Chemical mapping of a 177-nucleotide RNA with DMS and 2A3. The data come from the RNA Mapping Database (RMDB), library OK2TRN. The reactions ran in a buffer of 150 mM KOAc, 10 mM MgCl2 and 150 mM bicine (pH 8.5), at 24 C. For 2A3, 4,129 sequencing reads were counted. Values cover nucleotides 27 to 126.
RNA sequence: GGGAACGACUCGAGUAGAGUCGAAAAGAGUCAGAUGCAAAUUAUCGGCGGCGACCGGACGUCCCGCCUCAAGUGGGAAGUGUGUGGCGCGCCAGUGGAUAAUCUGUUCGCGGAUUUCUGCAGGUAAAAAUGAGGAAAAUUUCGAUUUUCCUCAUUUAAAAGAAACAACAACAACAAC
Reactivity to DMS in 0.01 (KOAc 150mM, MgCl2 10mM, bicine 150mM(pH8.5), 24C), signal-to-noise 6, nucleotides 027 to 126: g010a080g010u000c030a070g000a110u010g000c030a030a060a040u010u000a020u000c010g010g030c020g000g010c020g020a120c010c010g000g000a030c020g000u000c000c000c000g030c010c060u010c190a050a280g010u000g000g010g010a040a040g000u010g000u000g000u010g010g010c060g000c030g020c030c010a070g070u010g000g000a020u000a020a010u000c030u000g000u000u000c110g020c130g010g000a060u000u010u010c020u010g010c090a090g010g010u000a020a060
Reactivity to 2A3 in 0.01 (KOAc 150mM, MgCl2 10mM, bicine 150mM(pH8.5), 24C), signal-to-noise 4, nucleotides 027 to 126: g050a010g020u060c020a010g030a100u110g040c010a040a030a080u080u020a040u080c060g070g000c000g090g010c010g050a090c000c020g030g040a000c010g010u000c000c010c010g000c010c010u170c040a110a050g020u040g010g020g040a050a130g040u060g010u060g030u040g270g030c080g000c010g000c130c020a010g030u070g070g000a030u030a070a020u030c010u030g040u040u060c100g020c110g110g000a030u010u210u000c020u070g060c030a040g040g030u080a140a190